[RMDB]
RNA sequence: GGGAACGACUCGAGUAGAGUCGAAAAUUAGAGGUCUCGAUCACAGCGAGACCGGGAGAGACGCACCCGGGCCGGGUUAGGAACCGGUGCGGCGGGUGGUAUAGGAGCCGGCCGGACCCGGGGAUAACUUUACAGAGAGAUUCGUCUCUCUGUAAAGAAAAGAAACAACAACAACAAC
Reactivity to 2A3 in 0.01 (KOAc 150mM, MgCl2 10mM, bicine 150mM(pH8.5), 24C), signal-to-noise 2, nucleotides 027 to 126: u180u110a060g030a060g060g020u010c000u020c010g020a150u200c070a020c060a170g100c030g010a000g010a020c000c000g010g030g010a090g000a020g000a010c030g020c070a070c010c000c020g020g030g000c010c010g050g000g010u040u150a120g010g100a090a000c000c000g030g000u090g050c010g020g010c040g020g020g020u130g010g040u160a150u090a220g110g000a010g000c000c020g090g000c010c010g000g090a150c020c000c020g010g020g000g010a010u020a090a030
Reactivity to DMS in 0.01 (KOAc 150mM, MgCl2 10mM, bicine 150mM(pH8.5), 24C), signal-to-noise 4, nucleotides 027 to 126: u020u010a140g020a190g000g000u000c000u000c010g010a110u010c150a090c290a150g010c010g000a020g010a000c000c000g000g000g000a100g000a150g000a050c090g010c170a090c010c010c000g000g000g000c030c010g010g000g000u000u000a070g020g010a120a130c010c010g000g030u000g020c040g010g030c030g000g000g010u000g010g010u000a060u000a170g000g010a220g000c000c000g000g040c000c010g000g010a120c030c010c010g000g000g010g010a040u000a050a140